[RMDB]
RNA sequence: GGGAACGACUCGAGUAGAGUCGAAAAGUUGCCGACGAACCUUCCAACCUUCCAAACCUCGUUUUCGACAACCUUCCAACCUUCCAAUCUACUCGAGAGGAGGAGGAGGAGGAGGAGGAGGAAUUAAGAAUAGCUGAUGAUUCGUCAUCAGCUAUUCAAAAGAAACAACAACAACAAC
Reactivity to DMS in 0.01 (KOAc 150mM, MgCl2 10mM, bicine 150mM(pH8.5), 24C), signal-to-noise 1, nucleotides 027 to 126: g010u010u020g000c010c030g020a110c180g000a060a090c060c020u000u000c030c050a140a140c070c000u010u000c060c040a080a140a160c030c050u000c020g020u000u000u000u000c000g010a070c070a100a090c060c030u010u000c030c050a110a080c080c040u030u000c020c050a110a240u000c000u020a020c040u000c020g000a010g000a200g010g000a140g010g000a120g020g000a150g150g000a100g010g000a100g000g000a130g010g000a130g010g000a300a060u020u010a060a140
Reactivity to 2A3 in 0.01 (KOAc 150mM, MgCl2 10mM, bicine 150mM(pH8.5), 24C), signal-to-noise 3, nucleotides 027 to 126: g020u040u020g090c000c000g040a040c030g000a070a070c000c000u000u020c030c020a090a070c030c010u060u000c010c000a070a130a130c020c000u020c040g040u020u020u040u060c010g020a030c010a080a070c020c000u090u050c040c040a090a130c030c040u090u040c030c020a060a110u010c000u020a040c020u000c020g010a020g000a010g010g050a040g020g030a040g010g040a050g000g000a040g040g050a030g010g060a040g020g020a050g020g080a040a050u210u130a150a020